[RMDB]
RNA sequence: GGGAACGACUCGAGUAGAGUCGAAAACAGUAUAGGAUCUCAAUAGAUAACUAGCAAUUGAGUGAGUAAAUACCAGAUACCAAACUCACUCAUGUAAGUCUGGUAGCUUAAUUGUGACAUUACUGAGAAUUGUCUAAGUUUAGAUUACUAGGAAUAAGGUCGGAUAAUACUUCGGUAUUAUCCGACCAAAAGAAACAACAACAACAAC
Reactivity to 2A3 in 0.01 (KOAc 150mM, MgCl2 10mM, bicine 150mM(pH8.5), 24C), signal-to-noise 1, nucleotides 027 to 156: c000a000g030u040a020u030a070g150g070a210u020c000u000c000a000a110u070a030g010a000u250a220a120c040u010a000g000c000a030a070u050u140g010a000g000u010g010a000g000u080a030a170a070u080a220c040c020a010g110a210u120a130c090c070a120a180a000c000u030c050a050c000u020c000a020u010g000u040a000a000g000u000c000u000g000g050u020a010g000c000u060u070a080a020u080u000g030u020g020a000c040a000u040u060a060c110u060g040a130g040a300a010u050u040g070u000c040u040a060a130g010u040u060u000a050g010a100u080u100a090c020u120a020g130g080a060a050u210a120a030
The record gives the reactivity of an RNA of 207 nucleotides to 2A3. The data come from the RNA Mapping Database (RMDB), library OK3TST. The 2A3 profile rests on 451 reads.